Background
The record gives the reactivity of an RNA of 207 nucleotides to DMS and 2A3. The RNA was probed in 150 mM KOAc, 10 mM MgCl2 and 150 mM bicine (pH 8.5) at 24 C. DMS adducts were read by reverse transcription with MarathonRT. The 2A3 profile rests on 1,549 reads.
RNA sequence: GGGAACGACUCGAGUAGAGUCGAAAAGACGUGGAGGUUCCGCGCCCUCCUUUGCGCGUAAGUACGUCGAAAUUCGGUGCUUAGGAUCGCACCGUUAGAUCCAUUUGAUAUCCGCUUCGUGCCGCGGUUGGGCAUUUACACUUACCCGAAAGGGGAAGCAUAUCGGGUAUUUCGAUACCCGAUAUGCAAAAGAAACAACAACAACAAC
Reactivity to DMS in 0.01 (KOAc 150mM, MgCl2 10mM, bicine 150mM(pH8.5), 24C), signal-to-noise 1, nucleotides 027 to 156: g020a040c000g030u000g020g000a090g010g020u000u000c010c060g060c000g030c090c000c010u020c020c050u000u010u000g040c000g020c030g040u000a070a100g010u000a060c050g030u030c020g010a050a060a220u010u000c000g060g000u000g000c000u030u000a180g010g040a160u000c130g060c000a070c000c070g050u000u000a040g010a080u000c030c060a170u010u000u010g000a100u010a100u010c010c000g030c060u000u010c030g020u000g010c020c050g020c050g010g010u000u020g020g000g060c060a050u010u010u010a040c080a060c020u000u030a240c000c010c000g010a110a080a170g000g020g000g000a050a140
Reactivity to 2A3 in 0.01 (KOAc 150mM, MgCl2 10mM, bicine 150mM(pH8.5), 24C), signal-to-noise 3, nucleotides 027 to 156: g040a010c040g000u030g020g050a090g040g080u170u090c010c010g000c040g010c000c030c000u090c000c050u060u010u070g030c010g000c000g060u060a050a000g040u050a040c030g000u020c020g020a050a050a040u090u060c000g000g010u010g000c010u110u160a130g070g110a130u130c050g000c000a000c000c000g010u020u020a060g000a050u020c040c030a100u080u040u120g060a070u060a040u110c000c010g030c030u070u070c040g060u050g050c040c020g000c010g040g000u060u060g040g020g000c020a040u040u050u170a020c020a010c020u060u120a060c000c000c000g020a040a020a010g010g020g000g010a030a000